[RMDB]
RNA sequence: GGGAACGACUCGAGUAGAGUCGAAAAUGAAAGUAGUGCAUAUUAUCAUAGCAUGUGACAAUUUAGCUGUUUGGAUAAGAUCUCGCAACCUUGCUAUGAAUCAAACAAAGUGAACGGGGUCAGUGCCCAUGUUGUAUGGUUUCGACCAUACAACAUGAAAAGAAACAACAACAACAAC
Reactivity to DMS in 0.01 (KOAc 150mM, MgCl2 10mM, bicine 150mM(pH8.5), 24C), signal-to-noise 9, nucleotides 027 to 126: u010g000a080a080a090g010u000a060g030u010g010c050a050u000a080u000u000a110u010c030a020u000a040g000c030a040u000g010u010g010a080c120a070a070u010u000u010a090g030c040u000g020u000u000u000g020g010a100u010a080a100g010a300u000c030u000c060g020c040a110a090c110c030u000u000g010c020u000a040u000g010a050a100u010c190a060a060a080c120a040a040a060g010u010g010a100a120c060g000g000g000g010u000c010a080g020u010g010c020c050
Reactivity to 2A3 in 0.01 (KOAc 150mM, MgCl2 10mM, bicine 150mM(pH8.5), 24C), signal-to-noise 7, nucleotides 027 to 126: u150g030a050a040a020g050u140a020g050u060g130c060a020u070a050u230u110a070u120c010a000u010a010g010c000a000u070g070u070g110a060c050a110a130u070u120u090a110g020c040u040g050u130u080u100g080g000a040u040a150a090g010a070u010c030u010c040g000c020a030a050c020c000u010u020g000c000u020a010u070g050a030a020u100c040a020a030a080c030a030a080a010g060u060g070a050a020c020g020g000g000g020u030c050a030g040u030g110c010c010
Structure probing data (DMS and 2A3) for a 177-nucleotide construct.
High DMS reactivity at an A or C suggests that its Watson-Crick edge is free.
For 2A3 the reverse transcriptase was SuperScript II with manganese.
2A3 is a SHAPE reagent: it acylates the 2'-hydroxyl of flexible nucleotides of all four kinds.
The DMS profile rests on 16,488 reads.
The RNA was probed in 150 mM KOAc, 10 mM MgCl2 and 150 mM bicine (pH 8.5) at 24 C.